Structure probing data (DMS and 2A3) for a 177-nucleotide construct. For DMS, 12,299 sequencing reads were counted. Conditions: 150 mM KOAc, 10 mM MgCl2 and 150 mM bicine (pH 8.5), 24 C. Values are in units of 0.01, from 0 to 300, in steps of 10. High DMS reactivity at an A or C suggests that its Watson-Crick edge is free. Reactivities are given for positions 27 through 126.
RNA sequence: GGGAACGACUCGAGUAGAGUCGAAAAAAAAAGAGUUUCCAGGAACCUAAUAGGAAGCAAAGUUGUUCAAUACGUACUUCCUAUAUGGUUGACUUAACCAUUCCCUAGGUUCCUGGAAGCUAAAAAACAAGUAAGUAUAGUUCGCUAUACUUACUUGAAAAGAAACAACAACAACAAC
Reactivity to DMS in 0.01 (KOAc 150mM, MgCl2 10mM, bicine 150mM(pH8.5), 24C), signal-to-noise 7, nucleotides 027 to 126: a030a040a050a100a110g000a020g010u000u000u000c000c000a000g010g000a020a000c000c000u000a050a030u000a010g000g000a010a000g010c060a060a060a160g010u000u000g010u010u010c260a130a060u000a020c030g010u010a090c000u000u000c000c000u000a010u000a040u000g010g010u000u000g010a090c230u010u010a030a010c010c010a040u000u000c080c060c140u000a010g000g000u000u000c000c000u000g000g000a000a000g000c010u000a000a020a060a060a040a040
Reactivity to 2A3 in 0.01 (KOAc 150mM, MgCl2 10mM, bicine 150mM(pH8.5), 24C), signal-to-noise 4, nucleotides 027 to 126: a020a000a000a000a010g100a000g000u000u010u000c010c000a010g000g000a000a000c000c000u010a010a020u010a020g000g020a000a010g000c160a200a040a020g050u050u060g080u230u270c100a130a080u090a140c010g050u050a020c010u000u000c000c000u000a000u000a000u020g000g000u000u020g040a080c020u140u190a010a000c000c000a010u050u080c040c020c000u010a020g000g000u010u000c000c000u000g000g010a000a000g000c010u020a020a060a000a000a000a000